[RMDB]
RNA sequence: GGGAACGACUCGAGUAGAGUCGAAAAUUAGUCCUGGUUCCACACCGCAGGUGGCCCUGUGACUAGGAGCAGCCACCUUGCAUCCCAGUUGCCCCAGCAGGAGAAUGAGAUGAAUAAGACUUGCCUGGAUAGACGUACUUUUCGAAGUACGUCUAUCAAAAGAAACAACAACAACAAC
Reactivity to DMS in 0.01 (KOAc 150mM, MgCl2 10mM, bicine 150mM(pH8.5), 24C), signal-to-noise 8, nucleotides 027 to 126: u000u000a100g010u000c020c010u000g020g000u000u010c030c030a090c120a100c150c120g000c040a040g000g020u000g000g020c240c050c030u000g010u010g020a100c190u010a030g000g020a130g010c140a170g000c020c010a020c020c030u000u000g020c030a170u000c020c010c010a100g010u000u000g010c030c010c020c020a090g020c050a050g000g010a070g010a090a080u010g000a080g010a110u000g000a070a060u010a090a100g010a080c060u010u000g010c020c040u000g010
Reactivity to 2A3 in 0.01 (KOAc 150mM, MgCl2 10mM, bicine 150mM(pH8.5), 24C), signal-to-noise 3, nucleotides 027 to 126: u090u030a010g030u020c000c010u020g030g000u080u030c030c000a050c040a050c050c120g000c040a030g000g010u010g010g030c020c010c020u050g030u100g080a070c110u070a040g040g000a060g020c050a020g020c000c000a000c000c000u000u140g000c000a020u010c010c010c000a050g060u080u080g070c000c000c000c010a010g000c000a020g020g030a030g050a080a070u130g030a050g030a090u140g050a080a100u150a160a020g020a040c020u030u070g020c000c010u020g020